Structure probing data (2A3 and DMS) for a 207-nucleotide construct. Reactivities are given for positions 27 through 156. The data come from the RNA Mapping Database (RMDB), library M2RFOK. The reactions ran in a buffer of 150 mM KOAc, 10 mM MgCl2 and 150 mM bicine (pH 8.5), at 24 C. For 2A3, 4,619 sequencing reads were counted. The DMS profile rests on 5,614 reads.
RNA sequence: GGGAACGACUCGAGUAGAGUCGAAAAACAUGCUGGCCAACCCAACCACACGAUCCUCCAUCGGCAUGAUCAUGAUGUGUUCUCAAAUAUCAGGCCAGUAAAUCACCAUGCUCGUGCUGGUAAAGGCAACUUAUGCCCAAGUUCGCUUGGGCAUAAAUACAAGAACUUACUUCGGUAAGUUCUUGUAAAAAGAAACAACAACAACAAC
Reactivity to 2A3 in 0.01 (KOAc 150mM, MgCl2 10mM, bicine 150mM(pH8.5), 24C), signal-to-noise 5, nucleotides 027 to 156: a000c070a040u060g000c000u010g000g020c000c010a030a020c080c020c060a060a080c070c010a050c020a020c090g070a110u050c010c020u040c020c010a050u040c020g000g000c000a000u010g010a020u010c000a000u020g050a080u080g030u010g040u080u010c040u010c050a100a120a040u270a100u140c060a040g020g000c000c000a000g000u020a020a040a020u110c000a010c050c000a010u010g000c000u010c010g020u000g000c010u000g010g000u060a120a110a000g040g020c020a040a030c050u020u010a000u010g000c000c010c000a010a000g020u040u080c110g020c140u000u010g040g000g000c000a000u000a000a000a000
Reactivity to DMS in 0.01 (KOAc 150mM, MgCl2 10mM, bicine 150mM(pH8.5), 24C), signal-to-noise 2, nucleotides 027 to 156: a060c050a150u000g000c040u000g000g020c010c000a150a160c120c030c030a140a090c040c050a080c040a040c170g000a090u000c010c010u000c040c050a060u000c030g050g050c040a040u000g010a040u000c020a050u000g010a030u000g010u000g010u000u000c030u000c050a170a070a140u000a100u000c080a100g000g050c000c010a070g010u000a040a050a080u010c020a040c000c000a020u000g020c100u010c020g050u000g020c010u000g010g020u010a040a060a040g000g000c080a060a070c070u000u000a030u000g000c020c000c000a010a040g000u000u000c300g050c000u010u020g010g000g020c000a000u000a000a010a170